[RMDB]
An RNA of 170 nucleotides, treated with DMS and 2A3 and read out base by base.
It was measured as part of the RMDB library 15KLIB.
Reactivities are given for positions 27 through 129.
High 2A3 reactivity points to a flexible backbone, as in loops and unpaired stretches.
2A3 adducts were read by reverse transcription with SuperScript II with manganese.
The 2A3 profile rests on 24,002 reads.
The reactions ran in a buffer of 150 mM KOAc, 10 mM MgCl2 and 150 mM bicine (pH 8.5), at 24 C.

RNA sequence: GGGAACGACUCGAGUAGAGUCGAAAAGCUCCCUCCCCGUCCUUCCCUUUUCUUAUUAUUCCGAGGAUGUUUCCCAGCCAGGGAUUUUCAUCCUCGAGUUUCUUGAUGGUUCUCCUGCUCUUCCGGAUUGCCAGAUGGUUCGCCAUCUGGAAAAGAAACAACAACAACAAC
Reactivity to DMS in 0.01 (KOAc 150mM, MgCl2 10mM, bicine 150mM(pH8.5), 24C), signal-to-noise 8, nucleotides 027 to 129: g000c100u030c020c030c020u010c000c030c000c020g060u010c020c020u010u010c000c030c030u010u030u020u020c110u040u060a100u080u030a140u040u050c100c020g020a070g000g000a050u000g000u000u000u000c020c020c000a110g050c240c270a200g000g000g000a000u030u030u010u030c020a030u000c030c010u030c030g030a050g000u020u020u030c030u000u000g020a170u000g010g000u010u000c010u000c030c020u000g030c040u020c020u010u040c020c040g010g000a140u030u030g010
Reactivity to 2A3 in 0.01 (KOAc 150mM, MgCl2 10mM, bicine 150mM(pH8.5), 24C), signal-to-noise 8, nucleotides 027 to 129: g040c030u020c010c000c000u020c000c000c000c000g050u020c010c000u020u040c010c020c000u030u070u060u050c100u090u160a300u130u070a160u240u060c070c030g000a010g010g000a000u010g010u010u000u000c020c010c010a030g150c130c080a070g030g000g000a010u050u030u030u080c000a000u000c000c000u000c010g020a020g010u000u010u010c040u030u110g090a120u100g030g010u030u010c010u010c020c000u030g080c010u000c000u050u000c020c010g050g040a130u040u140g050